[RMDB]
RNA sequence: GGGAACGACUCGAGUAGAGUCGAAAAUCGACCGCGAGCGCCUCGCCGUAAUGCUCAUAGAUACGCAUGGCCUUUUCGCUGGUACUCAUGGCGGAAAACUCCGCUUCGCUCAUGGUGUCGAACGGGCUCGAGAAGCCCAGUUCGCUGGGCUUCUCGAAAAAGAAACAACAACAACAAC
Reactivity to DMS in 0.01 (KOAc 150mM, MgCl2 10mM, bicine 150mM(pH8.5), 24C), signal-to-noise 1, nucleotides 027 to 126: u010c010g000a070c040c050g030c030g030a050g000c210g000c050c030u000c070g040c070c000g000u000a080a070u000g000c000u000c110a120u000a130g020a100u010a070c100g000c040a040u000g000g000c040c070u010u010u020u010c050g010c040u000g020g030u000a060c110u020c120a070u030g000g000c000g000g000a000a110a150a120c110u000c020c000g010c080u000u000c040g000c000u030c020a070u000g000g020u000g040u010c020g000a080a120c100g010g010g020c040
Reactivity to 2A3 in 0.01 (KOAc 150mM, MgCl2 10mM, bicine 150mM(pH8.5), 24C), signal-to-noise 1, nucleotides 027 to 126: u100c000g040a010c000c000g050c010g000a010g000c070g000c070c010u040c070g020c020c000g050u030a180a000u200g040c000u040c120a040u040a130g090a060u120a020c030g000c080a030u060g020g020c030c000u070u200u030u020c040g020c070u070g120g020u010a000c030u070c070a070u140g050g000c000g090g050a000a120a000a120c100u000c020c080g040c000u100u020c040g000c030u090c100a040u070g000g020u070g050u090c010g010a010a030c040g000g050g000c040
An RNA of 177 nucleotides, treated with DMS and 2A3 and read out base by base. The data come from the RNA Mapping Database (RMDB), library OK2TRN. Values cover nucleotides 27 to 126. Conditions: 150 mM KOAc, 10 mM MgCl2 and 150 mM bicine (pH 8.5), 24 C. For DMS, 1,033 sequencing reads were counted. For 2A3, 822 sequencing reads were counted. 2A3 adducts were read by reverse transcription with SuperScript II with manganese.